Annotation
Chemical mapping of a 177-nucleotide RNA with 2A3. The 2A3 profile rests on 1,271 reads.

[RMDB]
RNA sequence: GGGAACGACUCGAGUAGAGUCGAAAAACGCUGUCGUUUCGCCGUCGACAACAAUCACACGCGCACACUUCCACCAUUAUCAUCUAUCCACCACACAGGUUCGUCGGAUGCGAAACGGUGGUGUUCAGGCUACCCACAGGUUCGCCUGUGGGUAGCCAAAAGAAACAACAACAACAAC
Reactivity to 2A3 in 0.01 (KOAc 150mM, MgCl2 10mM, bicine 150mM(pH8.5), 24C), signal-to-noise 2, nucleotides 027 to 126: a000c020g010c020u020g010u030c000g000u000u000u000c010g000c010c000g010u020c000g040a010c000a080a000c000a000a080u130c020a020c010a000c040g040c010g030c010a000c000a000c030u070u060c020c010a020c030c000a090u090u080a150u180c030a000u020c020u020a030u030c030c000a020c010c000a020c020a030c010a070g020g110u010u110c060g020u010c000g050g000a030u060g000c000g010a000a000a000c000g000g000u000g020g000u000g010u000u010c020a020